[RMDB]
RNA sequence: GGGAACGACUCGAGUAGAGUCGAAAAAGAUUUCCAGCGGACUUUCGGUUUCAGUUCUUGUUGAGCGAAGACCGUGAUUGGCCUUUGCAUAUUAAGUGUGACUUAGUUAGAGAGACCACGGUUUAAUAAUGAAACUAGACUUCGGUCUAGUUUCAUUAAAAGAAACAACAACAACAAC
Reactivity to DMS in 0.01 (KOAc 150mM, MgCl2 10mM, bicine 150mM(pH8.5), 24C), signal-to-noise 2, nucleotides 027 to 126: a070g000a110u000u020u000c020c000a100g010c050g000g010a060c010u000u010u030c030g000g010u000u000u040c080a110g000u010u020c150u000u000g000u040u000g000a170g000c050g010a040a060g000a010c000c010g000u000g000a170u100u060g020g010c080c000u010u010u000g000c080a060u090a040u000u000a030a040g010u000g020u070g000a020c040u000u000a000g000u040u020a140g020a060g010a020g020a080c030c020a010c150g010g000u000u000u040a110a110u020
Reactivity to 2A3 in 0.01 (KOAc 150mM, MgCl2 10mM, bicine 150mM(pH8.5), 24C), signal-to-noise 1, nucleotides 027 to 126: a000g140a080u080u020u040c020c010a030g070c040g000g030a000c040u050u080u030c060g100g020u060u000u100c010a010g000u050u000c000u140u170g170u020u080g050a040g060c030g010a060a040g000a030c080c000g010u080g070a050u080u270g080g000c010c010u000u000u060g090c050a020u000a040u250u000a010a040g020u010g050u140g100a010c000u000u000a000g040u040u100a030g000a020g000a010g010a110c020c020a020c050g000g010u000u000u060a070a100u050